[RMDB]
RNA sequence: GGGAACGACUCGAGUAGAGUCGAAAAGAUAUGGACUUGUCAACUCGUGCAUCGAUCUCGGAAACGAGGGAGCACACGCGAGUUGAGCAAGUCCUAAGUCAAAGCUCAAACGUUCGCGUUUGAGCAAUCACUGAUACAAGUUCGCUUGUAUCAGUGAAAAAGAAACAACAACAACAAC
Reactivity to 2A3 in 0.01 (KOAc 150mM, MgCl2 10mM, bicine 150mM(pH8.5), 24C), signal-to-noise 6, nucleotides 027 to 126: g040a010u080a050u180g000g000a000c000u010u010g020u080c010a010a000c000u010c010g020u040g020c040a150u150c090g060a100u020c010u010c020g010g030a110a090a050c020g000a010g000g020g010a030g030c110a050c000a010c130g040c010g010a000g010u010u010g000a010g000c000a000a000g000u000c000c010u000a060a000g010u010c050a120a080a020g000c000u000c000a000a010a010c010g030u070u100c300g010c000g130u010u010u010g000a000g000c000a000a000
Reactivity to DMS in 0.01 (KOAc 150mM, MgCl2 10mM, bicine 150mM(pH8.5), 24C), signal-to-noise 8, nucleotides 027 to 126: g010a030u000a300u000g010g010a010c000u000u000g010u000c010a010a010c000u000c000g040u000g020c110a170u010c060g000a290u010c000u010c000g000g000a110a080a200c010g010a030g010g000g020a300g020c300a050c180a110c050g000c020g000a010g010u000u000g010a050g000c010a000a010g000u000c000c000u000a010a050g010u000c050a050a110a130g000c010u000c000a000a010a000c010g020u000u020c220g020c000g010u000u000u000g000a000g000c000a030a010
Chemical mapping of a 177-nucleotide RNA with 2A3 and DMS. 2A3 adducts were read by reverse transcription with SuperScript II with manganese. The 2A3 profile rests on 27,169 reads. The DMS profile rests on 10,535 reads. Values cover nucleotides 27 to 126.